Structure probing data (2A3 and DMS) for a 177-nucleotide construct. Values cover nucleotides 27 to 126. The reactions ran in a buffer of 150 mM KOAc, 10 mM MgCl2 and 150 mM bicine (pH 8.5), at 24 C.

RNA sequence: GGGAACGACUCGAGUAGAGUCGAAAAACAUCAUGGAUCCGCGAUCGUCUAGUGAUCCGUACACAUGUGAGUACCAUGGUACGUACGCGACUAGACGUACCAUGUCUAGAUACUAGCAUGACUCAUGCGUUAGGAGAUAAUUCGUUAUCUCCUAACGAAAAGAAACAACAACAACAAC
Reactivity to 2A3 in 0.01 (KOAc 150mM, MgCl2 10mM, bicine 150mM(pH8.5), 24C), signal-to-noise 9, nucleotides 027 to 126: a000c030a080u170c030a040u080g020g000a030u030c040c030g010c050g100a130u120c060g170u030c150u100a060g050u050g180a030u000c010c020g010u050a030c110a000c000a050u060g050u060g090a020g020u020a020c000c010a000u000g000g000u010a000c000g010u050a090c070g030c050g200a100c090u140a070g010a060c000g000u000a000c000c000a000u010g010u000c020u040a060g010a100u040a060c010u010a030g010c010a030u050g040a110c030u040c090a040u150g040
Reactivity to DMS in 0.01 (KOAc 150mM, MgCl2 10mM, bicine 150mM(pH8.5), 24C), signal-to-noise 9, nucleotides 027 to 126: a100c110a090u010c050a030u000g010g010a080u000c050c190g010c120g010a080u010c090g010u000c080u000a080g020u010g000a060u000c070c040g010u000a050c140a130c080a070u000g010u010g010a110g020u000a040c100c000a010u000g000g000u000a010c020g020u000a070c090g010c130g010a100c160u010a100g000a030c000g000u000a010c020c010a010u000g000u000c100u000a060g000a100u000a050c120u000a140g000c020a030u000g000a090c070u000c040a050u000g010